[RMDB]
RNA sequence: GGGAACGACUCGAGUAGAGUCGAAAAACACUAAUUCUUGAUAAUCUGCAAUAUUGUUGACAUCAUAUUUUUCACGGUAGAUCACUAAUCAACUGAUAUGCUACCGAUAUCAGCUGAAAUCCUAUUAGGAUAGCCUCCUGUUCGCAGGAGGCUAUCCAAAAGAAACAACAACAACAAC
Reactivity to 2A3 in 0.01 (KOAc 150mM, MgCl2 10mM, bicine 150mM(pH8.5), 24C), signal-to-noise 1, nucleotides 027 to 126: a000c010a000c000u110a000a120u100u120c020u000u140g080a150u100a230a090u070c000u090g000c000a250a150u100a120u040u190g010u070u050g000a000c000a000u150c000a000u090a160u230u000u000u080u180c050a000c000g000g000u000a000g000a120u080c050a000c140u300a060a060u030c000a000a220c000u110g000a000u020a010u090g090c120u050a110c000c010g040a000u000a000u040c000a000g040c000u000g000a000a000a000u020c000c000u070a020u170u290a020
Structure probing data (2A3) for a 177-nucleotide construct. It was measured as part of the RMDB library OK1LIB. The 2A3 profile rests on 374 reads. Values are in units of 0.01, from 0 to 300, in steps of 10.